[RMDB]
RNA sequence: GGGAACGACUCGAGUAGAGUCGAAAAGAUAUGGAGCGGCAUGCCUCAACAGCUCCAAUCGGAAACGAUUGGAGACAUGAGGGUGCCCGCUCCUAAGUCAAACGGAAUAAGCUUCGGCUUAUUCCGAUCUUUACGUAAAGUUCGCUUUACGUAAAGAAAAAGAAACAACAACAACAAC
Reactivity to 2A3 in 0.01 (KOAc 150mM, MgCl2 10mM, bicine 150mM(pH8.5), 24C), signal-to-noise 7, nucleotides 027 to 126: g020a010u060a020u170g000g010a010g010c010g020g020c030a030u190g300c010c000u020c030a120a160c080a140g050c000u010c000c010a000a000u010c000g010g030a060a070a040c010g000a010u010u000g010g010a000g030a020c030a100u160g020a020g000g010g010u000g000c010c000c010g000c000u000c000c000u000a030a010g040u020c050a080a070a120c020g000g010a010a000u010a010a000g000c020u060u260c300g100g000c000u040u050a000u000u000c000c000g000a010
Reactivity to DMS in 0.01 (KOAc 150mM, MgCl2 10mM, bicine 150mM(pH8.5), 24C), signal-to-noise 7, nucleotides 027 to 126: g000a060u010a300u010g000g000a000g020c020g000g010c000a020u000g000c000c000u000c010a040a080c300a210g000c010u000c000c000a000a010u000c010g000g010a150a120a220c000g000a020u000u000g000g010a010g010a020c080a150u000g010a030g000g000g010u000g000c100c040c030g030c000u000c000c000u000a000a080g000u010c030a080a150a300c010g000g000a010a000u000a010a000g000c000u000u020c280g030g010c000u000u000a000u000u000c000c000g010a010
Background
The record gives the reactivity of an RNA of 177 nucleotides to 2A3 and DMS. It was measured as part of the RMDB library TTRDES. The reactions ran in a buffer of 150 mM KOAc, 10 mM MgCl2 and 150 mM bicine (pH 8.5), at 24 C.